This 177-nucleotide RNA was probed chemically with DMS.
[RMDB]
RNA sequence: GGGAACGACUCGAGUAGAGUCGAAAAAGUUACCUUAGGGCCGGUGUGAAAGAUGGCAGAAAUCAUGGUUACAACUUCAACUUGCUUUUUGAGCACUAUAAGUGGGUAGGCCGGAUUUGCAUUUUGAACCUAAGGUGCAGUUCGCUGCACCUUAGGUAAAAGAAACAACAACAACAAC
Reactivity to DMS in 0.01 (KOAc 150mM, MgCl2 10mM, bicine 150mM(pH8.5), 24C), signal-to-noise 2, nucleotides 027 to 126: a080g020u000u000a110c040c020u010u010a110g000g010g020c030c030g000g010u000g020u010g020a060a080a110g010a110u000g000g030c060a110g000a040a040a050u020c110a040u010g000g010u000u000a100c150a060a070c040u000u000c150a090a110c180u000u000g000c020u000u000u010u000u000g040a070g040c040a040c140u000a070u010a060a020g020u000g010g010g010u000a060g010g040c010c010g000g020a150u050u000u000g010c050a110u000u000u000u020g010a180